[RMDB]
RNA sequence: GGGAACGACUCGAGUAGAGUCGAAAAAAGAUAUGGAAGAUUCUCUAGCGUGGGCUUGGAUUUAUACAUGAACUAUCGGAAACGAUAGAUACCUUGUAUUGUCAGCCUCGGGAUCUUCCUAAGUCAAGAUGGUCUUAUACUUCGGUAUAAGACCAUCAAAAGAAACAACAACAACAAC
Reactivity to 2A3 in 0.01 (KOAc 150mM, MgCl2 10mM, bicine 150mM(pH8.5), 24C), signal-to-noise 2, nucleotides 027 to 126: a010a000g040a020u100a060u150g010g000a010a000g000a040u200u030c110u020c070u230a100g140c070g210u200g080g080g020c090u180u180g240g000a040u210u300u040a020u040a000c010a040u050g080a210a040c010u000a020u010c000g030g010a020a080a020c000g000a010u000a000g010a000u040a020c030c000u000u030g010u000a020u000u020g030u000c030a000g010c040c010u010c000g000g000g000a000u000c010u000u000c000c010u000a110a020g040u040c030a040a060
Reactivity to DMS in 0.01 (KOAc 150mM, MgCl2 10mM, bicine 150mM(pH8.5), 24C), signal-to-noise 2, nucleotides 027 to 126: a130a100g000a010u010a300u010g010g000a040a020g030a040u010u000c010u030c170u030a100g060c190g000u020g020g040g060c020u010u030g030g010a050u000u000u000a030u000a000c000a010u010g010a120a100c000u000a010u000c020g010g010a140a070a240c010g020a000u000a000g000a120u010a080c300c020u000u010g010u000a010u010u020g000u000c010a070g000c020c000u010c050g000g010g010a020u000c020u000u000c010c000u010a020a080g000u000c060a070a150